[RMDB]
RNA sequence: GGGAACGACUCGAGUAGAGUCGAAAAUGCAUUCUUAAACCCUCUUGGUGGCUUCCCUGUAAAUGCUUCCAAGAUAUGAGCGAAUGCUAUAGAAAUUGCAGGAAAGUCCAAAGGGCUGCGCGUCUCCGGAGUCUGAUAGAUUCGUCUAUCAGACUCCAAAAGAAACAACAACAACAAC
Reactivity to DMS in 0.01 (KOAc 150mM, MgCl2 10mM, bicine 150mM(pH8.5), 24C), signal-to-noise 2, nucleotides 027 to 126: u050g000c090a050u030u010c000u060u020a160a120a160c070c070c050u000c120u000u000g000g070u050g000g020c000u000u010c050c010c000u000g000u000a030a020a050u010g030c020u000u000c020c030a070a240g000a080u070a090u070g000a090g000c050g000a040a000u040g040c000u000a130u080a070g020a100a100a040u000u010g000c000a000g050g000a090a100a080g000u000c000c040a030a030a070g060g000g000c070u000g000c050g020c210g020u000c010u000c020c300
Reactivity to 2A3 in 0.01 (KOAc 150mM, MgCl2 10mM, bicine 150mM(pH8.5), 24C), signal-to-noise 3, nucleotides 027 to 126: u120g000c020a030u040u110c060u200u260a060a120a120c010c010c000u040c060u000u040g050g000u060g160g000c020u010u000c000c010c000u010g000u020a030a070a030u150g000c000u000u000c010c010a050a020g100a140u140a140u240g080a020g050c090g030a040a020u190g010c000u000a000u020a060g030a020a100a020u050u050g020c000a000g010g000a080a030a010g020u000c000c000a020a020a080g000g030g000c000u020g000c050g000c020g040u000c000u000c030c040